[RMDB]
RNA sequence: GGGAACGACUCGAGUAGAGUCGAAAAUUAGGCAACAAGUAUACAAUUUUGCGCCAUUCAUGAUUACGGAAUUAUUGGCUUUCAUAACCAGUUGCUCGGCCAUACGUUUACUUUUUGCGUAUACAUGUCCUGGUGAUAUAUCAUAAAGGGUAUGCUCACCUGACUGUGUAUUCGUACACAGUCAGGUAAAAGAAACAACAACAACAAC
Reactivity to DMS in 0.01 (KOAc 150mM, MgCl2 10mM, bicine 150mM(pH8.5), 24C), signal-to-noise 2, nucleotides 027 to 156: u000u000a080g020g040c020a060a050c050a050a040g020u000a080u000a090c090a130a110u020u010u000u010g030c050g030c000c010a140u000u010c030a100u000g000a090u000u000a190c060g000g040a050a050u010u000a140u000u020g030g030c130u000u000u000c080a090u000a030a030c020c010a050g000u000u000g000c070u020c050g030g040c060c070a080u000a040c100g010u000u010u000a070c060u000u010u010u000u000g030c060g000u000a060u000a020c050a060u000g010u000c020c040u000g030g030u000g020a120u000a050u000a070u010c040a060u010a090a080a110g010g020g010u000a050u010g010c030u000c020
Reactivity to 2A3 in 0.01 (KOAc 150mM, MgCl2 10mM, bicine 150mM(pH8.5), 24C), signal-to-noise 4, nucleotides 027 to 156: u080u040a010g000g090c000a000a020c030a030a040g050u030a030u020a100c070a060a080u070u090u080u130g100c130g000c040c010a020u070u090c020a020u080g120a150u050u190a070c090g050g060a050a040u140u030a030u060u130g010g020c010u020u120u170c090a110u050a080a080c010c010a020g010u060u040g030c060u050c080g010g000c010c000a020u030a040c060g020u050u070u040a030c030u040u060u010u020u040g040c010g040u060a020u030a080c030a020u050g030u020c020c020u020g010g030u010g030a020u040a020u020a040u190c030a030u100a060a100a000g020g010g010u030a020u030g020c000u010c010